[RMDB]
RNA sequence: GGGAACGACUCGAGUAGAGUCGAAAAACAAGGACUCGCGGGAGCACUUCGAGAUGCGCACACACAAGCGGUUGAUCGACAUCAUCGAUCCCACGCCGAAGACCGUUGACGCGCUCAUGCGCAUCGAGAGGUGCUCUACCUUCGGGUAGAGCACCUCAAAAGAAACAACAACAACAAC
Reactivity to DMS in 0.01 (KOAc 150mM, MgCl2 10mM, bicine 150mM(pH8.5), 24C), signal-to-noise 1, nucleotides 027 to 126: a060c080a220a130g020g010a120c040u000c000g030c300g000g020g000a100g000c080a030c030u000u000c030g030a270g000a030u000g030c010g010c000a030c150a080c060a080c150a080a040g010c000g010g010u000u020g010a080u010c000g000a000c130a120u000c120a120u000c020g000a030u000c010c030c070a040c120g000c040c020g000a040a250g010a000c070c000g010u010u030g010a110c110g000c050g000c100u000c100a080u020g010c000g000c010a020u000c000g000a240